[RMDB]
RNA sequence: GGGAACGACUCGAGUAGAGUCGAAAAGAAAAACCAAAGCCGGAACCGUACGCAUAUGGCUCGCGAGGUCCAGAGGGCUUAGAUGACUUUAUCACCAAACAUGCUGGAUACCAAAGAUUUACACAGAAGCUAAUAUCCUAUUCGUAGGAUAUUAGCUAAAAGAAACAACAACAACAAC
Reactivity to 2A3 in 0.01 (KOAc 150mM, MgCl2 10mM, bicine 150mM(pH8.5), 24C), signal-to-noise 6, nucleotides 027 to 126: g000a000a000a000a000a000c030c010a030a050a000g040c010c020g030g010a030a050c020c020g030u100a030c050g010c030a020u070a090u220g090g000c010u020c020g050c010g030a050g000g050u000c000c000a030g080a060g080g010g000c020u060u030a030g030a080u100g020a040c020u050u090u090a060u100c030a020c070c000a040a060a040c020a030u090g030c010u030g040g030a030u040a080c010c010a020a080a030g060a130u110u180u190a060c080a000c020a050g170a130
Reactivity to DMS in 0.01 (KOAc 150mM, MgCl2 10mM, bicine 150mM(pH8.5), 24C), signal-to-noise 8, nucleotides 027 to 126: g010a070a090a090a100a120c030c020a090a070a090g010c020c020g000g010a070a060c040c030g000u000a070c110g000c070a080u010a070u000g000g010c050u000c070g010c060g010a120g010g010u000c020c030a090g010a100g010g010g020c050u000u000a070g000a070u010g010a090c110u000u000u010a060u010c050a070c020c020a050a070a070c090a030u010g010c020u000g000g000a090u000a070c050c050a060a090a090g000a100u010u010u010a070c170a060c160a080g000a130